[RMDB]
RNA sequence: GGGAACGACUCGAGUAGAGUCGAAAACCGAGUGAGUUCGCUCACUCGGAAAGAAGUGUGCGCAUACUGCUCCGACAGUAGCGACAAGAGCAGCAAGCAAAAAAACAAACCUGUUCGCAGGUUUGAAGAUCAAAUGCAGGUUCGCCUGCAUUUGAUCAAAAGAAACAACAACAACAAC
Reactivity to 2A3 in 0.01 (KOAc 150mM, MgCl2 10mM, bicine 150mM(pH8.5), 24C), signal-to-noise 1, nucleotides 027 to 126: c000c000g030a000g010u010g000a030g010u030u170c170g020c080u000c000a000c000u000c000g010g000a000a030a000g070a030a070g180u140g010u060g210c000g000c030a120u010a090c000u000g000c020u060c140c050g110a180c020a020g040u060a010g060c030g000a030c040a020a020g030a020g020c030a000g040c060a060a080g020c060a030a080a000a070a000a000a120c000a010a010a010c000c000u010g010u060u040c200g000c090a000g000g000u010u010u010g000a010a000
Reactivity to DMS in 0.01 (KOAc 150mM, MgCl2 10mM, bicine 150mM(pH8.5), 24C), signal-to-noise 1, nucleotides 027 to 126: c000c010g000a020g000u000g000a040g010u000u000c230g020c010u000c000a010c000u000c020g000g010a030a050a050g000a080a110g000u010g020u000g010c070g010c070a120u010a060c000u010g010c030u000c050c160g000a130c070a060g000u000a120g020c100g010a030c050a070a150g040a130g010c020a000g010c090a100a090g030c170a000a030a090a040a040a080a110c000a030a000a000c000c000u000g040u000u010c130g000c010a000g000g000u010u000u010g000a020a030
Chemical mapping of a 177-nucleotide RNA with 2A3 and DMS.
The RNA was probed in 150 mM KOAc, 10 mM MgCl2 and 150 mM bicine (pH 8.5) at 24 C.